[RMDB]
RNA sequence: GGGAACGACUCGAGUAGAGUCGAAAAAAAGUAGAGUGUUACGUGCUGAUCAAAAGGUAACGGACAUUUGAUUCAUUGGUUAUCGACGAGGAAGGUACUCUAAAUCGGCCAGUUACUAACGGGUGAGAUCUGAUGUUUAUAAAAUGGGGGAUGAGGCCACUGGGAGUCUGUUCGCAGACUCCCAGUGAAAAGAAACAACAACAACAAC
Reactivity to 2A3 in 0.01 (KOAc 150mM, MgCl2 10mM, bicine 150mM(pH8.5), 24C), signal-to-noise 2, nucleotides 027 to 156: a000a000a000g030u010a000g010a010g010u010g000u020u020a010c010g000u000g010c010u040g020a120u290c120a040a050a080a040g030g010u030a020a040c000g010g000a000c010a000u040u060u030g060a090u090u130c070a030u060u110g040g020u090u070a070u120c090g040a070c050g000a030g000g020a070a040g050g010u060a090c040u000c020u070a030a060a110u080c000g010g020c030c010a020g030u070u110a070c020u040a020a130c090g050g000g020u010g030a050g000a030u030c040u040g040a080u090g070u010u180u040a130u180a030a140a070a050u050g020g010g000g010g010a010u030g000a050g050g020c030